RNA sequence: GGGAACGACUCGAGUAGAGUCGAAAAGAUAUGGAAUCGAUCCAACAGCUACGGUUCGGAAACGAACCCGUAGACAUGGCAGAGAUUCCUAAGUCAAAACUUCCCAAACCUUCGGGUUUGGGAAGAAGGGAAGAAUAACGUUCGCGUUAUUCUUCCCAAAAGAAACAACAACAACAAC
Reactivity to DMS in 0.01 (KOAc 150mM, MgCl2 10mM, bicine 150mM(pH8.5), 24C), signal-to-noise 2, nucleotides 027 to 126: g010a040u000a280u030g000g020a000a000u000c010g000a300u000c010c000a050a060c210a200g000c010u000a010c020g020g020u010u000c000g000g000a070a080a110c010g000a020a000c050c070c000g010u000a000g010a000c060a100u010g030g000c240a010g030a300g010a020u000u000c010c010u010a020a190g000u000c030a040a070a070a130c000u000u000c000c000c000a000a010a000c000c000u000u000c180g020g000g020u000u000u020g000g000g000a000a000g000a020a080
Reactivity to 2A3 in 0.01 (KOAc 150mM, MgCl2 10mM, bicine 150mM(pH8.5), 24C), signal-to-noise 2, nucleotides 027 to 126: g020a010u050a010u100g000g000a010a020u000c030g020a050u050c040c040a170a130c110a300g030c000u020a010c000g000g000u010u020c010g000g010a030a010a030c000g000a000a000c120c000c040g020u000a000g030a040c080a150u120g020g000c150a020g040a000g010a100u010u000c010c010u010a080a000g020u030c020a000a010a160a270c000u020u020c000c000c000a010a000a000c040c010u040u110c300g080g010g000u020u010u000g010g020g010a000a000g000a010a020